Source: RMDB library TTRDEL, as collected in RNAgym.
Structure probing data (2A3 and DMS) for a 177-nucleotide construct.
For DMS the reverse transcriptase was MarathonRT.
As a SHAPE reagent, 2A3 marks flexible, mostly unpaired nucleotides at the ribose 2'-OH.
Values cover nucleotides 27 to 126.
RNA sequence: GGGAACGACUCGAGUAGAGUCGAAAAGAUAUGGAGGUGGAGAACUGCUUCUGGGACGAAGAACUCGGAAACGAGGGAGUCCCACUAGCAGACCACCUCCUAAGUCAAAGCGCUGUUCGCAGCGCAAGACAUCCUAGAAGUUCGCUUCUAGGAUGUCAAAAGAAACAACAACAACAAC
Reactivity to 2A3 in 0.01 (KOAc 150mM, MgCl2 10mM, bicine 150mM(pH8.5), 24C), signal-to-noise 3, nucleotides 027 to 126: g020a020u070a020u170g000g000a000g020g010u020g010g060a210g050a290a160c000u010g000c000u010u000c020u010g000g000g000a000c010g140a300a170g010a080a010c000u000c000g020g020a060a050a040c020g000a000g000g000g010a010g010u000c000c000c000a000c000u000a000g000c000a000g020a060c000c000a000c010c000u000c000c000u000a000a000g000u010c020a010a060a010g000c000g000c010u020g030u070u100c210g010c130a000g000c000g000c010a000a010
Reactivity to DMS in 0.01 (KOAc 150mM, MgCl2 10mM, bicine 150mM(pH8.5), 24C), signal-to-noise 5, nucleotides 027 to 126: g000a030u000a300u000g000g000a000g020g000u000g000g000a090g010a120a090c010u000g010c000u000u000c060u010g000g010g010a000c000g010a090a180g030a160a230c010u000c000g000g000a110a120a190c000g000a010g000g000g000a060g010u000c000c010c000a000c010u000a010g020c000a000g000a080c000c000a000c010c000u000c000c000u000a010a050g010u010c020a100a100a150g000c010g030c000u000g000u000u010c180g020c010a030g000c000g000c000a020a030